[RMDB]
RNA sequence: GGGAACGACUCGAGUAGAGUCGAAAAUGGUGUCAACGUGACAUACUCCCCUGGGGGUUACAUUGCUGGCAUCCAGAGGGGCAUCAUGUCUGAAAGAAUGGAAUACGACCAGGCGGGCCGCAUCACAUCCAGGAUCUUCGCUGAUGGGAAGACAUGAUAAAAUAAUACUCUUCGGAGUAUUAUUUUAAAAAGAAACAACAACAACAAC
Reactivity to DMS in 0.01 (KOAc 150mM, MgCl2 10mM, bicine 150mM(pH8.5), 24C), signal-to-noise 3, nucleotides 027 to 156: u000g020g000u000g020u000c010a040a120c040g010u010g010a090c040a150u010a080c010u010c010c000c020c030u000g010g020g000g050g040u020u000a070c060a150u000u000g010c070u020g020g000c020a050u000c010c020a080g020a070g000g010g030g040c070a040u010c020a030u000g000u000c020u010g000a100a120a160g010a090a110u000g010g010a120a130u000a060c030g010a060c030c020a190g020g010c160g020g010g020c000c010g020c020a060u010c060a050c040a050u010c030c020a130g020g010a100u000c030u010u000c060g020c070u010g000a150u000g020g000g000a170a050g000a040c030a040u000g000a130
Reactivity to 2A3 in 0.01 (KOAc 150mM, MgCl2 10mM, bicine 150mM(pH8.5), 24C), signal-to-noise 2, nucleotides 027 to 156: u110g020g010u030g000u010c010a060a050c160g070u080g050a020c010a040u060a080c010u030c000c020c000c030u040g020g000g010g000g020u060u050a030c050a110u140u300g030c050u040g050g000c000a010u000c040c000a000g050a050g020g010g010g010c010a030u030c000a010u050g010u000c020u030g080a160a070a040g100a050a050u040g060g040a040a030u110a170c050g020a030c040c000a010g040g010c030g020g000g020c020c030g050c050a030u100c020a010c010a060u070c040c010a010g040g060a100u040c020u120u090c100g010c040u080g050a110u050g010g000g050a030a010g030a020c010a010u040g000a010